Chemical mapping of a 177-nucleotide RNA with DMS. It was measured as part of the RMDB library TTRINS. The reactions ran in a buffer of 150 mM KOAc, 10 mM MgCl2 and 150 mM bicine (pH 8.5), at 24 C. In probing experiments dimethyl sulfate is read out at A N1 and C N3, which are open when not base-paired.

[RMDB]
RNA sequence: GGGAACGACUCGAGUAGAGUCGAAAAGAUAUGGAGCUUUGAAAGCUUGGAUUUAGUGGUGUAGCGAAAGUACUCGGAAACGAGUAUGAGUAGCUACACCACUUGUCAGCUUUAAAGCUCCUAAGUCGAGUAGCUAAAAGUUCGCUUUUAGCUACUCAAAAGAAACAACAACAACAAC
Reactivity to DMS in 0.01 (KOAc 150mM, MgCl2 10mM, bicine 150mM(pH8.5), 24C), signal-to-noise 2, nucleotides 027 to 126: g000a130u010a300u020g000g000a000g030c000u000u010u000g010a010a020a020g030c000u000u010g030g010a020u010u000u000a000g000u010g000g020u010g010u020a000g010c000g000a220a120a300g020u000a000c000u000c010g000g000a190a150a300c010g010a000g010u000a000u000g010a070g000u000a100g000c000u000a000c000a000c000c000a010c000u000u000g000u000c010a010g000c010u000u000u000a020a010a010g000c010u010c000c000u000a010a070g000u000c120